The data come from the RNA Mapping Database (RMDB), library OK3TST. An RNA of 207 nucleotides, treated with 2A3 and DMS and read out base by base. The DMS profile rests on 1,558 reads. The 2A3 profile rests on 1,192 reads.
[RMDB]
RNA sequence: GGGAACGACUCGAGUAGAGUCGAAAAAUGGUCUGAUAUUAUCGGUCUGUAUUUAUGGAGAGGAGCUUCAACACACUCACGAUUUAUGCUUAAUCUCACUUUUGACGGCACGAUAAAUCUUAGUGUCCUACACAACAACCUUCUUGAAGACCAGUGACAGGGACUAGUGAUUCGUCACUAGUCCCUGAAAAGAAACAACAACAACAAC
Reactivity to 2A3 in 0.01 (KOAc 150mM, MgCl2 10mM, bicine 150mM(pH8.5), 24C), signal-to-noise 3, nucleotides 027 to 156: a000u060g000g010u020c010u010g060a010u060a090u160u060a020u030c050g020g030u030c040u100g060u110a140u030u190u050a160u200g040g010a010g010a010g030g070a010g020c030u120u120c120a140a060c080a000c050a020c130u140c020a070c090g050a030u080u060u050a010u110g000c010u100u020a090a090u070c000u030c020a160c050u000u020u040u150g040a010c010g000g000c050a020c180g060a020u020a030a020a010u040c000u050u040a060g000u030g100u130c000c040u140a070c020a000c000a200a000c020a020a020c000c030u080u100c110u090u110g080a040a010g010a010c000c010a010g070u050g080a000
Reactivity to DMS in 0.01 (KOAc 150mM, MgCl2 10mM, bicine 150mM(pH8.5), 24C), signal-to-noise 1, nucleotides 027 to 156: a230u000g050g000u000c010u000g040a210u000a090u010u000a000u000c030g050g020u070c110u020g010u010a040u000u000u000a050u020g000g010a120g010a120g010g000a080g080c020u010u000c060a080a130c100a060c030a060c020u010c070a180c050g000a160u000u000u000a030u000g010c030u010u000a110a200u010c030u010c140a120c090u010u010u000u010g050a100c020g010g000c070a080c060g020a120u000a030a050a070u050c010u000u000a030g020u000g030u010c050c030u000a120c070a160c040a040a060c030a080a070c010c010u000u000c060u000u010g000a140a050g030a080c000c000a100g010u020g020a160